[RMDB]
RNA sequence: GGGAACGACUCGAGUAGAGUCGAAAAUUGAACGAAGUGAAAGGCUUAUCGUCCAGGCGUCCAUCGCCAAUCAGGUACAGGAUGCCUACCAGCACGAAAGACGGCGCUGUCUGUCGCGUUUGCGGCGGUGAGGUAGGGUGUUCGCACCCUACCUCACAAAAGAAACAACAACAACAAC
Reactivity to 2A3 in 0.01 (KOAc 150mM, MgCl2 10mM, bicine 150mM(pH8.5), 24C), signal-to-noise 1, nucleotides 027 to 126: u090u130g030a040a060c030g000a090a010g050u060g160a180a030a080g100g010c030u050u100a160u240c030g050u000c050c010a010g000g020c000g000u000c040c000a100u120c070g000c030c000a010a110u150c090a060g000g010u070a090c020a040g040g000a010u020g080c000c010u050a060c010c050a020g000c050a000c060g060a100a040a000g120a030c000g030g010c090g000c060u070g070u080c010u060g000u000c000g010c020g120u130u130u300g010c040g000g000c000g070
Reactivity to DMS in 0.01 (KOAc 150mM, MgCl2 10mM, bicine 150mM(pH8.5), 24C), signal-to-noise 2, nucleotides 027 to 126: u010u000g000a060a050c040g070a090a070g000u000g030a080a080a140g020g000c000u000u000a080u000c010g020u000c040c050a020g000g000c020g000u000c030c010a150u030c280g010c010c000a050a120u030c170a100g020g040u030a030c250a130g000g010a040u010g000c000c000u000a180c130c080a070g000c050a060c060g020a000a080a050g000a070c090g020g000c170g040c040u000g020u000c080u000g010u010c050g040c050g000u000u010u020g040c140g040g000c050g030
Source: RMDB library OK2TRN, as collected in RNAgym.
The record gives the reactivity of an RNA of 177 nucleotides to 2A3 and DMS.
DMS adducts were read by reverse transcription with MarathonRT.
The 2A3 profile rests on 1,213 reads.
2A3 adducts were read by reverse transcription with SuperScript II with manganese.
Reactivities are given for positions 27 through 126.